The record gives the reactivity of an RNA of 177 nucleotides to DMS. For DMS, 1,129 sequencing reads were counted.
[RMDB]
RNA sequence: GGGAACGACUCGAGUAGAGUCGAAAAUUGAAUCUGUCCGCCGGGUUGCUGACGGCAAGCGCGUCAACCCGAACCAUCAGCGGCGAAAUUGUCGAGUACGGAGUUGUGGGGCACACCAGUCUUGGCCGAUUGGAGCAUCAUUCGUGAUGCUCCAAUCAAAAGAAACAACAACAACAAC
Reactivity to DMS in 0.01 (KOAc 150mM, MgCl2 10mM, bicine 150mM(pH8.5), 24C), signal-to-noise 2, nucleotides 027 to 126: u020u000g000a110a070u010c100u000g010u000c010c020g010c060c010g020g000g010u000u010g010c070u010g010a030c070g010g010c140a110a140g010c100g000c030g000u000c040a060a070c010c040c030g000a110a190c040c040a030u020c140a120g020c020g030g020c030g000a030a070a100u000u000g010u000c050g000a090g020u010a050c070g000g000a100g040u000u010g040u010g020g020g000g050c100a030c040a060c050c030a080g000u000c000u000u010g000g000c110c140